[RMDB]
RNA sequence: GGGAACGACUCGAGUAGAGUCGAAAACAGUCAUCAUAUCAGUAGACUGAUGGAUUGAGAGAUGAAGGGCGAGAGGUUUGUCCUGGUCCACGCAAGGCAGAUAGGGGAGAUAGUGCUUCUCUUAUGACUCUACAAAGUACUUCGGUACUUUGUAGAGAAAAGAAACAACAACAACAAC
Reactivity to 2A3 in 0.01 (KOAc 150mM, MgCl2 10mM, bicine 150mM(pH8.5), 24C), signal-to-noise 2, nucleotides 027 to 126: c010a020g070u050c010a060u010c010a020u080a020u190c050a040g160u150a030g120a180c000u040g010a050u000g040g020a040u070u110g060a040g010a010g030a090u040g080a070a090g000g010g020c040g010a040g050a050g170g030u070u140u060g050u040c010c010u030g040g000u020c050c020a000c020g080c030a030a040g030g030c010a010g010a180u110a030g060g030g040g000a040g000a000u100a030g060u040g110c030u040u020c030u000c000u030u020a130u150g020a050
Reactivity to DMS in 0.01 (KOAc 150mM, MgCl2 10mM, bicine 150mM(pH8.5), 24C), signal-to-noise 3, nucleotides 027 to 126: c060a100g000u000c030a090u000c040a030u010a150u000c080a110g010u010a100g000a060c060u010g010a130u020g000g000a020u010u010g000a050g000a120g000a050u010g000a130a080g000g010g000c090g020a080g010a100g010g000u000u000u010g010u010c030c000u000g000g020u000c020c050a060c160g010c080a070a070g010g000c040a030g010a090u000a040g010g010g000g000a070g000a150u000a090g010u010g000c040u000u020c020u000c040u000u000a080u010g030a240